[RMDB]
RNA sequence: GGGAACGACUCGAGUAGAGUCGAAAAAGCCGAGCACCCAACAAGCCGAGUUAUGGCGUCACUGGAAAGCCGAGUUGUUACGUCAGAUUCCGGAAACGGUAAAACAUCGGCUGGUUAUGAUUUCGGUGAGGAUAUUGUUCUUGCUCAGGCGGUCGCACCUCUGAAUAGUAUUCGUACUAUUCAGAGGAAAAGAAACAACAACAACAAC
Reactivity to DMS in 0.01 (KOAc 150mM, MgCl2 10mM, bicine 150mM(pH8.5), 24C), signal-to-noise 4, nucleotides 027 to 156: a160g020c010c010g000a040g000c030a090c030c030c020a080a080c060a070a230g020c010c010g000a100g020u010u000a070u010g010g000c040g010u010c060a250c090u000g030g020a090a070a060g020c010c010g020a090g030u000u000g020u000u000a060c050g020u010c050a140g000a300u000u000c070c070g030g020a120a070a120c010g020g020u010a040a080a040a040c040a100u000c010g000g000c000u000g010g020u000u000a070u000g010a100u000u000u010c000g020g020u010g010a120g020g010a090u000a060u000u000g000u000u000c050u010u000g020c000u000c040a090g020g020c010g010g010u000c040g000c060a190
Reactivity to 2A3 in 0.01 (KOAc 150mM, MgCl2 10mM, bicine 150mM(pH8.5), 24C), signal-to-noise 5, nucleotides 027 to 156: a000g010c010c000g010a010g000c000a080c040c050c030a020a020c020a020a010g010c000c010g010a030g030u090u060a060u110g030g030c030g080u090c010a050c100u150g060g100a190a060a020g040c020c000g000a020g030u060u060g130u080u080a020c020g010u000c070a130g040a250u140u100c050c060g050g000a080a060a010c010g000g000u020a040a060a000a010c010a160u000c000g000g000c000u000g000g000u030u030a070u080g050a040u110u160u130c000g000g010u020g010a050g080g040a070u050a070u200u140g020u030u040c030u030u040g010c010u020c080a110g000g000c020g000g000u050c030g020c060a030
The record gives the reactivity of an RNA of 207 nucleotides to DMS and 2A3. Source: RMDB library OK3TST, as collected in RNAgym. 2A3 adducts were read by reverse transcription with SuperScript II with manganese. As a SHAPE reagent, 2A3 marks flexible, mostly unpaired nucleotides at the ribose 2'-OH. Conditions: 150 mM KOAc, 10 mM MgCl2 and 150 mM bicine (pH 8.5), 24 C.